[RMDB]
RNA sequence: GGGAACGACUCGAGUAGAGUCGAAAACUAUGCAGAUUCGUCUGCAUAGAGACCCGAUGAAGCGGCACUUACACAGCUUCAUACACGUAAGAAGUGCAAUAUAGGGACGAGGGUUCGCCCUCGUCAAGACCGCUCAUGAGUUCGCUCAUGAGCGGUCAAAAGAAACAACAACAACAAC
Reactivity to DMS in 0.01 (KOAc 150mM, MgCl2 10mM, bicine 150mM(pH8.5), 24C), signal-to-noise 1, nucleotides 027 to 126: c020u000a000u000g000c000a000g010a060u000u000c250g010u000c000u000g000c020a000u000a040g000a180g000a140c020c030c000g030a030u010g020a010a030g020c030g050g020c030a030c060u000u000a130c100a060c050a110g000c020u000u020c000a010u030a220c080a020c180g030u000a070a110g030a030a020g010u030g020c010a300a050u020a170u000a200g010g000g000a000c000g030a020g000g000g000u000u020c260g020c030c020c000u000c000g000u020c000a000a040
Reactivity to 2A3 in 0.01 (KOAc 150mM, MgCl2 10mM, bicine 150mM(pH8.5), 24C), signal-to-noise 1, nucleotides 027 to 126: c000u010a000u000g060c000a000g000a070u030u130c130g060u000c140u000g000c000a000u000a000g000a020g020a020c000c000c000g020a080u030g010a010a010g000c000g000g010c040a010c050u130u120a000c150a000c020a100g000c000u000u000c000a010u030a010c150a000c090g170u080a060a060g050a020a020g050u000g040c030a090a030u220a060u120a240g250g060g000a000c000g020a000g000g010g040u020u060c220g040c000c000c000u000c000g000u000c000a000a000

Structure probing data (DMS and 2A3) for a 177-nucleotide construct. It was measured as part of the RMDB library M2PK50. The reactions ran in a buffer of 150 mM KOAc, 10 mM MgCl2 and 150 mM bicine (pH 8.5), at 24 C. For DMS, 596 sequencing reads were counted.